[RMDB]
RNA sequence: GGGAACGACUCGAGUAGAGUCGAAAACUAUAACGUUCGCGUUAUAGAAAAAAGCGUACUACUCGGGAGUUACAUCCUACCCACCCACUCCCAAAUAGGAGUGGAGGGAUUUAACAUCGAUCGAGUAUCGCAAAAAACUACCCGUUCGCGGGUAGAACUUAAUGGGUAGCUUCGGCUACCCAUUAAGAAAAGAAACAACAACAACAAC
Reactivity to 2A3 in 0.01 (KOAc 150mM, MgCl2 10mM, bicine 150mM(pH8.5), 24C), signal-to-noise 1, nucleotides 027 to 156: c000u000a000u000a010a010c010g000u060u170c290g000c010g110u060u000a030u040a000g000a000a200a020a000a000a050g010c020g030u040a060c020u050a000c000u020c010g130g020g000a010g010u000u000a010c000a010u000c000c000u010a180c050c020c030a040c000c000c000a000c000u050c000c010c030a170a260a150u150a150g010g000a000g000u000g000g000a010g020g000g000a000u000u010u060a020a030c030a280u120c100g230a160u070c040g000a020g000u050a050u210c120g000c080a080a150a000a000a000a080c040u030a000c000c030c010g000u070u050c300g010c020g170g000g010u000a000g010a010a010